RNA sequence: GGGAACGACUCGAGUAGAGUCGAAAACGAGCCUCGUUCGCGAGGCUCGAAACGCGGCGAAAGCUCGACUAAAUGUCGAAAGUGUAACGCCAAUCCCACACAAAAGGCUGCCGUUCGCGGCAGCCAAGUACUAUCAGGACUUCGGUCCUGAUAGUACAAAAGAAACAACAACAACAAC
Reactivity to DMS in 0.01 (KOAc 150mM, MgCl2 10mM, bicine 150mM(pH8.5), 24C), signal-to-noise 1, nucleotides 027 to 126: c000g000a030g030c030c000u000c000g010u000u010c150g080c020g030a020g000g010c000u000c000g000a020a040a130c160g080c300g010g000c020g000a050a160a300g000c030u000c000g030a020c000u000a110a210a020u010g020u000c000g000a050a080a070g010u000g010u000a100a290c010g000c000c000a170a160u010c000c000c000a190c290a080c180a040a050a090a150g000g000c000u000g010c010c000g000u000u040c210g050c060g000g000c010a020g010c000c000a000a010
Reactivity to 2A3 in 0.01 (KOAc 150mM, MgCl2 10mM, bicine 150mM(pH8.5), 24C), signal-to-noise 1, nucleotides 027 to 126: c020g000a010g010c000c010u000c000g020u060u050c120g000c000g100a010g020g000c020u000c000g010a000a000a000c080g000c070g000g020c010g070a160a040a010g030c000u020c000g000a010c010u130a300a120a040u230g010u000c010g030a080a050a070g080u130g010u060a170a030c000g000c000c010a010a040u030c010c040c030a010c000a000c000a030a120a030a040g000g050c000u000g000c030c000g000u010u070c280g000c020g090g000c000a010g000c030c000a010a000
Source: RMDB library M2PK50, as collected in RNAgym. Structure probing data (DMS and 2A3) for a 177-nucleotide construct. The reactions ran in a buffer of 150 mM KOAc, 10 mM MgCl2 and 150 mM bicine (pH 8.5), at 24 C. Reactivities are given for positions 27 through 126.